[RMDB]
RNA sequence: GGGAACGACUCGAGUAGAGUCGAAAACCCCCAAGUUUCGACUUGGGGGAAUUAAAAUCAGCGGUAAAUAAUUAGCUCGGGUUACCGCUGAACGCGAGCAUAGAGCAAUGCGCUUCGGCGCAUUGAAUCAUUAACACAGCUUCGGCUGUGUUAAUGAAAAAGAAACAACAACAACAAC
Reactivity to 2A3 in 0.01 (KOAc 150mM, MgCl2 10mM, bicine 150mM(pH8.5), 24C), signal-to-noise 2, nucleotides 027 to 126: c000c000c000c020c000a020a000g010u020u100u150c200g090a010c000u000u000g000g000g000g000g030a010a020u210u140a090a050a000a110u070c000a000g030c030g050g040u040a080a040a100u130a100a280u250u180a070g000c000u020c050g060g030g000u000u000a020c000c010g070c000u030g010a040a020c040g040c030g070a010g000c050a100u120a110g100a030g110c000a000a000u000g040c020g020c000u040u030c260g110g030c010g010c020a000u010u000g020a000a050
Reactivity to DMS in 0.01 (KOAc 150mM, MgCl2 10mM, bicine 150mM(pH8.5), 24C), signal-to-noise 1, nucleotides 027 to 126: c000c000c010c020c010a000a000g020u000u000u000c140g000a030c000u000u000g030g030g020g020g020a010a010u000u020a040a050a190a150u010c000a000g010c000g020g010u000a010a020a090u010a040a130u010u010a120g020c000u000c030g030g000g020u000u000a000c000c010g000c000u000g000a000a030c180g020c040g020a020g010c040a130u040a080g010a130g000c010a010a000u000g010c010g000c010u000u000c240g010g000c030g010c000a010u000u000g010a050a080